[RMDB]
RNA sequence: GGGAACGACUCGAGUAGAGUCGAAAAGAAUUUUAGAAAAGCAAAGCCAUAAAAGCAGCACCCGAAAUGCUGAGGGCCAAUUUGGGGUUUAGGAGAAAACUGGAAGAGAAAAAGAAAAAGAAAAAGAGGAUAUACGAUAGUUCGCUAUCGUAUAUCCAAAAGAAACAACAACAACAAC
Reactivity to DMS in 0.01 (KOAc 150mM, MgCl2 10mM, bicine 150mM(pH8.5), 24C), signal-to-noise 2, nucleotides 027 to 126: g000a110a090u000u000u000u010a070g010a070a130a090a090g000c040a100a080a110g020c040c010a060u000a090a050a150a120g000c010a030g010c010a070c020c060c090g030a110a070a080u000g010c040u010g000a050g000g050g020c050c090a050a060u010u000u040g000g000g090g020u000u020u010a020g020g010a060g020a030a010a040a030c110u000g000g050a020a140g000a020g010a030a020a130a040a070g010a010a050a030a040a060g000a010a030a010a070a110g000a240
Reactivity to 2A3 in 0.01 (KOAc 150mM, MgCl2 10mM, bicine 150mM(pH8.5), 24C), signal-to-noise 2, nucleotides 027 to 126: g020a050a080u150u200u240u300a170g000a030a020a000a000g040c070a110a000a000g000c000c020a050u110a080a090a010a000g000c030a010g010c000a020c000c000c040g010a040a070a000u090g000c030u030g000a040g010g020g020c000c000a060a090u040u020u050g000g000g000g020u010u030u120a040g030g010a070g010a030a100a000a040c040u010g060g020a020a020g050a020g000a000a010a010a070a000g230a100a120a020a000a030g140a020a110a020a000a000g090a030